The data come from the RNA Mapping Database (RMDB), library OK1LIB. Chemical mapping of a 177-nucleotide RNA with 2A3 and DMS. The 2A3 profile rests on 36,466 reads.
RNA sequence: GGGAACGACUCGAGUAGAGUCGAAAAGGAACUAUGUUCAUGCAUGAAGCCUCCACGUGCUUGCGAAAGCGUUCGGAAACGAAUGAGCAUAGUUAAGAGCUGAAGGAGGCACGGCUCAAAAUAAAAAGGUGCAACAACUGUUCGCAGUUGUUGUACCAAAAGAAACAACAACAACAAC
Reactivity to 2A3 in 0.01 (KOAc 150mM, MgCl2 10mM, bicine 150mM(pH8.5), 24C), signal-to-noise 9, nucleotides 027 to 126: g130g010a010a000c000u000a000u000g000u000u000c000a000u010g000c000a000u010g040a100a010g010c000c000u000c000c000a020c010g010u000g000c000u060u090g020c000g040a060a040a040g010c040g150u050u020c020g030g080a040a050a040c050g060a220a010u000g000a000g000c000a000u000a000g000u000u010a040a030g000a000g000c010u020g030a120a040g030g000a000g000g010c020a010c000g000g000c000u000c000a050a070a010a010u280a020a060a010a010a010
Reactivity to DMS in 0.01 (KOAc 150mM, MgCl2 10mM, bicine 150mM(pH8.5), 24C), signal-to-noise 5, nucleotides 027 to 126: g000g010a020a000c000u000a010u000g000u000u000c000a000u000g000c000a010u010g010a080a080g010c010c000u010c000c010a300c010g030u000g000c010u020u020g020c010g020a110a100a080g000c010g040u020u010c010g000g000a130a040a140c020g030a030a010u010g000a010g000c000a000u010a000g010u000u000a050a060g000a000g020c000u000g000a060a090g010g000a010g000g000c000a280c010g000g010c000u000c000a140a050a030a100u070a050a100a080a170a090